[RMDB]
RNA sequence: GGGAACGACUCGAGUAGAGUCGAAAAGCUAGUAACCCAUUUUAAGGAUGCUGAGGCCCAGAGAGUUUGAGUAACUUGACCUGCACAGCUAGACGGUAGCCAAAUGAGGAUUUGAAUUCAGGUGGUCUAACUCUCUACAGUGCUAAGCUGUGCUCCAAGGUGACUAAAAUUUCGAUUUUAGUCACCUAAAAGAAACAACAACAACAAC
Reactivity to 2A3 in 0.01 (KOAc 150mM, MgCl2 10mM, bicine 150mM(pH8.5), 24C), signal-to-noise 4, nucleotides 027 to 156: g040c030u050a030g050u150a200a140c000c010c020a040u130u130u040u120a120a040g030g000a030u060g010c000u040g120a050g080g000c020c020c030a020g020a010g010a010g050u050u080u150g050a040g010u090a050a040c010u050u040g080a080c020c020u040g000c020a010c000a010g010c010u020a010g040a030c060g020g030u020a000g060c070c030a040a090a080u110g030a030g010g040a030u060u090u270g140a160a070u150u120c030a030g100g000u050g040g000u060c020u030a050a000c010u020c010u000c000u030a020c010a040g070u090g260c000u070a100a000g000c000u000g010u020g020c020u040c020c010a020
Reactivity to DMS in 0.01 (KOAc 150mM, MgCl2 10mM, bicine 150mM(pH8.5), 24C), signal-to-noise 2, nucleotides 027 to 156: g030c040u000a100g020u020a150a150c010c000c030a220u000u000u000u010a110a190g020g020a070u000g020c040u000g000a120g010g000c010c020c080a220g000a090g000a070g020u000u000u000g020a200g030u000a070a100c060u000u000g020a060c070c010u010g000c020a100c050a030g020c020u010a090g000a060c040g020g010u010a050g000c100c020a000a060a070u000g010a110g040g020a150u000u020u000g010a100a130u000u010c070a080g020g030u000g000g030u000c020u000a040a070c010u000c030u000c020u010a030c020a060g010u000g000c010u010a090a170g000c010u010g020u000g000c010u000c020c060a140